An RNA of 177 nucleotides, treated with 2A3 and DMS and read out base by base. Values are in units of 0.01, from 0 to 300, in steps of 10. It was measured as part of the RMDB library M2PK50. Values cover nucleotides 27 to 126.
RNA sequence: GGGAACGACUCGAGUAGAGUCGAAAACUACGAUGCUUCGGCAUCGUAGAAAGUAAACUCAAGACGAAUGCGCUGAAAAACGUCUUGAGACAGCGCAAAGAAAAACUUGGUUCUUCGGAACCAAGAACUACGCACUAGUGUUCGCACUAGUGCGUAGAAAAGAAACAACAACAACAAC
Reactivity to 2A3 in 0.01 (KOAc 150mM, MgCl2 10mM, bicine 150mM(pH8.5), 24C), signal-to-noise 2, nucleotides 027 to 126: c010u000a000c000g020a000u010g010c020u020u100c240g050g000c010a010u010c000g000u000a000g000a000a010a000g000u040a000a080a040c020u000c020a020a020g050a010c010g100a270a110u100g010c040g020c090u070g020a030a010a060a020a020c010g010u000c000u010u020g010a000g020a010c000a010g020c030g000c000a080a080a040g080a100a130a030a020a010c020u020u000g020g000u010u040c010u020u040c210g040g000a000a000c030c010a000a000g000a000a050
Reactivity to DMS in 0.01 (KOAc 150mM, MgCl2 10mM, bicine 150mM(pH8.5), 24C), signal-to-noise 1, nucleotides 027 to 126: c000u000a020c000g000a030u000g010c030u010u000c220g000g010c000a000u010c000g020u000a010g000a090a030a060g000u000a120a030a090c020u000c000a030a010g000a010c000g010a100a100u000g050c070g040c010u000g000a040a040a040a170a060c010g010u000c000u000u010g000a030g000a000c170a070g040c030g000c030a110a120a110g000a030a070a080a110a080c000u000u000g000g010u000u010c000u030u000c300g020g000a000a010c000c000a010a010g000a070a070